About this RNA:
The record gives the reactivity of an RNA of 177 nucleotides to DMS and 2A3. Values cover nucleotides 27 to 126. 2A3 adducts were read by reverse transcription with SuperScript II with manganese.
RNA sequence: GGGAACGACUCGAGUAGAGUCGAAAAUGGAGACACAAAAGAAUAUCCAUGUCUUGGUUUCUGACGUGGGCUGCUAUAUUUCCAGCUGAUUCCUGCAUGAUUCCAUAAGCAUCCGUCUUGAAGGAAGCAGAUUACGGAGUUUCGACUCCGUAAUCUGAAAAGAAACAACAACAACAAC
Reactivity to DMS in 0.01 (KOAc 150mM, MgCl2 10mM, bicine 150mM(pH8.5), 24C), signal-to-noise 3, nucleotides 027 to 126: u000g020g010a050g010a100c090a070c110a050a120a100a110g000a080a080u010a090u010c010c020a040u010g010u000c110u010u000g010g000u000u000u000c040u000g000a220c160g020u000g000g000g040c040u000g010c070u000a060u000a130u000u000u000c060c020a030g020c090u000g010a130u000u000c010c000u000g000c050a070u000g000a070u000u000c010c050a060u030a080a110g010c080a130u000c050c060g010u000c070u000u000g020a070a090g010g000a060a050g010
Reactivity to 2A3 in 0.01 (KOAc 150mM, MgCl2 10mM, bicine 150mM(pH8.5), 24C), signal-to-noise 2, nucleotides 027 to 126: u060g020g030a020g030a030c040a010c030a130a090a090a060g070a060a070u060a040u150c010c020a040u040g030u010c040u040u060g100g000u010u050u030c030u020g010a050c040g040u010g040g030g000c030u060g010c020u080a070u020a100u300u110u000c010c010a000g000c000u040g040a140u050u020c020c020u000g000c020a040u060g010a080u100u000c000c010a020u050a140a020g060c020a040u090c040c020g130u070c100u080u100g070a090a040g050g000a000a040g060